[RMDB]
RNA sequence: GGGAACGACUCGAGUAGAGUCGAAAACAAGGCUUUUAGAAUGCAGUUUCUCAUUUGCUGUGGACAUGACCAUAAAAAAAUUUCCCAGUAGGUUUUCUAUCUGCUACUUUGCUAGCAAUCAGCUUAUCGUUAAUUCAACGUUCGCGUUGAAUUAACGAAAAGAAACAACAACAACAAC
Reactivity to 2A3 in 0.01 (KOAc 150mM, MgCl2 10mM, bicine 150mM(pH8.5), 24C), signal-to-noise 2, nucleotides 027 to 126: c050a030a030g100g010c010u060u110u030u060a090g050a070a030u130g020c000a030g020u000u070u000c060u010c010a030u070u040u150g000c000u030g010u070g030g000a000c010a100u110g070a070c050c000a040u280a010a130a010a000a000a030a050u020u020u020c010c000c000a000g020u030a020g050g000u060u040u150u110c040u050a140u020c000u050g020c000u020a010c000u130u240u230g050c060u010a000g000c010a020a060u170c050a010g060c000u000u110a060u070